[RMDB]
RNA sequence: GGGAACGACUCGAGUAGAGUCGAAAAGAUAUGGACCAGUAGGUGAUGCACCAUUCACGGAGAUGGAUAUCGGAAACGAUAUCCCAUCGCGAAACGUGAUGGUGCAUCACCUACUGGUCCUAAGUCACAAUAUUCUUUCGUUCGCGAAAGAAUAUUGAAAAGAAACAACAACAACAAC
Reactivity to DMS in 0.01 (KOAc 150mM, MgCl2 10mM, bicine 150mM(pH8.5), 24C), signal-to-noise 3, nucleotides 027 to 126: g010a050u000a300u000g000g000a030c000c000a010g020u000a000g010g020u000g010a010u000g020c000a010c010c000a030u010u020c010a010c000g010g040a230g010a030u000g010g000a060u000a000u000c000g000g000a120a070a210c000g020a010u000a000u010c120c040c020a000u000c000g040c210g000a070a120a190c000g000u000g000a020u000g000g020u000g010c000a000u010c000a000c000c000u000a020c000u000g000g000u010c000c000u000a000a040g010u010c050a260
Structure probing data (DMS) for a 177-nucleotide construct. The reactions ran in a buffer of 150 mM KOAc, 10 mM MgCl2 and 150 mM bicine (pH 8.5), at 24 C.